[RMDB]
The record gives the reactivity of an RNA of 177 nucleotides to 2A3 and DMS. Values cover nucleotides 27 to 126. In probing experiments dimethyl sulfate is read out at A N1 and C N3, which are open when not base-paired. The RNA was probed in 150 mM KOAc, 10 mM MgCl2 and 150 mM bicine (pH 8.5) at 24 C. The data come from the RNA Mapping Database (RMDB), libraries RFM100 and RFMREP.

RNA sequence: GGGAACGACUCGAGUAGAGUCGAAAACAGCAACCCGUCAAGCGUCAUAACAUAUACCACUUGCGGUAUAGCAACCAUCAAAGAUCGCAUUUGACAGUUAUGGCAAAAGGACGGCAACGUCAGCGCGAUAUAGGGAACGAUUCGUCGUUCCCUAUAUAAAAGAAACAACAACAACAAC
Reactivity to 2A3 in 0.01 (KOAc 150mM, MgCl2 10mM, bicine 150mM(pH8.5), 24C), signal-to-noise 8, nucleotides 027 to 126: c030a000g090c030a050a030c000c010c000g020u020c020a060a020g050c020g070u010c010a010u010a020a000c010a030u130a020u050a180c030c020a030c050u040u050g020c030g000g020u020a030u060a080g040c050a060a090c060c050a090u180c090a090a080a060g080a040u040c020g000c030a020u010u000u030g030a050c030a000g000u000u000a010u010g000g010c000a090a040a010a030g120g010a000c010g010g010c030a050a030c030g080u070c050a030g050c030g010c040g060
Reactivity to DMS in 0.01 (KOAc 150mM, MgCl2 10mM, bicine 150mM(pH8.5), 24C), signal-to-noise 9, nucleotides 027 to 126: c070a110g010c100a120a120c220c010c020g020u000c020a060a070g010c290g010u000c010a010u000a020a020c040a100u010a100u020a100c170c010a050c080u000u000g020c050g010g020u000a020u010a100g010c190a090a110c200c140a110u020c100a040a080a080g010a030u000c040g010c030a080u000u000u000g000a120c150a100g000u010u000a020u000g010g000c010a020a060a120a070g010g000a050c030g000g000c140a060a060c080g000u000c050a050g010c060g000c090g010